Record summary: The data come from the RNA Mapping Database (RMDB), library OK1LIB. Structure probing data (2A3) for a 177-nucleotide construct. Reactivities are given for positions 27 through 126. Conditions: 150 mM KOAc, 10 mM MgCl2 and 150 mM bicine (pH 8.5), 24 C.
RNA sequence: GGGAACGACUCGAGUAGAGUCGAAAAGUCACACCCGCUCUGAUGAACACCGGCACCGUGGUGGUUAAGGUGAUCGCAGGGCUGCCCAGGGUGCCGAAAAUCGGCGGUCAUGCUCCGUAGUGAGCGCCUCGCGCUGGGCAUUCGUGCCCAGCGCGAGAAAAGAAACAACAACAACAAC
Reactivity to 2A3 in 0.01 (KOAc 150mM, MgCl2 10mM, bicine 150mM(pH8.5), 24C), signal-to-noise 1, nucleotides 027 to 126: g060u060c010a000c000a060c010c060c000g000c000u060c060u040g270a250u020g000a080a000c050a010c000c130g000g000c000a000c000c000g190u120g160g210u040g000g030u090u000a210a060g000g000u000g030a130u050c030g010c000a040g010g000g150c090u230g030c000c000c000a000g080g000g000u000g010c070c000g090a100a010a000a000u060c060g000g000c000g000g040u150c000a080u100g000c000u000c000c040g220u070a030g120u050g150a000g020c000g000c000